[RMDB]
RNA sequence: GGGAACGACUCGAGUAGAGUCGAAAACAAAAAACAGACUAGUGGUGAGUGUAGGAGAUGGUCUAAGUUUUAAUUCUUAUGGUCUUAUUCCUAACCUCGCUAGUCCAUUUUACACAGCAAAUUCAAAGAUUACAAUGAAUGUAGGACCAGGAUUAGGUACUCUCUAUUGGUUCGCCAAUAGAGAGUAAAAAGAAACAACAACAACAAC
Reactivity to 2A3 in 0.01 (KOAc 150mM, MgCl2 10mM, bicine 150mM(pH8.5), 24C), signal-to-noise 4, nucleotides 027 to 156: c000a000a160a020a000a000a010c020a010g020a010c000u020a000g030u040g220g120u090g140a190g050u180g090u050a010g000g000a020g010a040u070g020g010u000c000u020a010a020g010u000u030u120u300a180a210u240u030c010u020u050a070u270g000g000u020c000u070u090a090u120u030c000c000u010a010a020c000c000u000c000g000c000u000a000g000u000c000c000a040u070u060u030u060a040c180a020c030a030g120c040a050a080a090u120u080c020a060a190a050g040a080u060u110a120c020a110a100u160g040a080a030u070g080u080a040g020g100a050c020c000a020g100g000a080u070u080a080g030g000
Reactivity to DMS in 0.01 (KOAc 150mM, MgCl2 10mM, bicine 150mM(pH8.5), 24C), signal-to-noise 2, nucleotides 027 to 156: c040a000a070a090a020a050a070c030a060g000a020c020u000a010g020u010g020g050u000g020a120g020u010g010u000a090g030g000a050g000a130u000g010g000u000c000u000a030a040g000u020u010u000u000a060a240u010u000c010u010u000a100u020g020g000u010c010u000u040a130u000u000c010c000u000a060a020c010c000u000c030g050c040u010a050g000u000c000c030a070u000u000u000u000a130c060a110c070a160g060c060a020a090a110u000u000c030a060a050a130g030a160u000u010a150c040a090a170u000g000a060a040u000g030u000a050g010g000a050c030c020a060g000g010a090u000u000a080g030g020
An RNA of 207 nucleotides, treated with 2A3 and DMS and read out base by base. The RNA was probed in 150 mM KOAc, 10 mM MgCl2 and 150 mM bicine (pH 8.5) at 24 C.